[RMDB]
RNA sequence: GGGAACGACUCGAGUAGAGUCGAAAAUCAGACCGAGCGGGGUCUUGACCAGUGGCGAGCGCCCUGUUCAGACAGGAGUAAUCCCAGCAGAAACAGGGUUUUCACCCUUCCUUUCUUCUGGUUUCCUCCUACUCUAGAUGUUCGCAUCUAGAGUAGGAAAAGAAACAACAACAACAAC
Reactivity to DMS in 0.01 (KOAc 150mM, MgCl2 10mM, bicine 150mM(pH8.5), 24C), signal-to-noise 1, nucleotides 027 to 126: u020c060a100g020a200c100c030g000a020g020c040g020g010g010g010u000c010u000u020g010a090c050c020a110g010u010g010g010c010g000a050g000c240g020c000c020c010u000g010u000u000c000a060g020a110c210a060g010g000a000g010u000a020a050u000c120c000c000a000g010c060a020g000a010a030a000c180a010g000g030g010u000u010u010u000c300a080c000c010c010u000u000c060c060u000u000u000c020u000u000c010u000g010g000u000u000u000c030c020u020
Reactivity to 2A3 in 0.01 (KOAc 150mM, MgCl2 10mM, bicine 150mM(pH8.5), 24C), signal-to-noise 2, nucleotides 027 to 126: u050c010a010g040a030c000c080g020a010g030c050g000g040g020g070u020c000u040u070g070a190c020c030a170g100u140g220g030c040g010a010g050c100g040c000c000c010u020g000u040u010c010a030g060a090c080a040g010g020a010g000u030a030a020u040c030c010c000a000g000c010a000g030a020a030a070c300a140g010g000g000u060u000u130u170c040a000c000c000c010u030u020c000c000u000u030u030c000u050u000c010u010g010g050u010u000u010c010c030u020

Chemical mapping of a 177-nucleotide RNA with DMS and 2A3. Values cover nucleotides 27 to 126.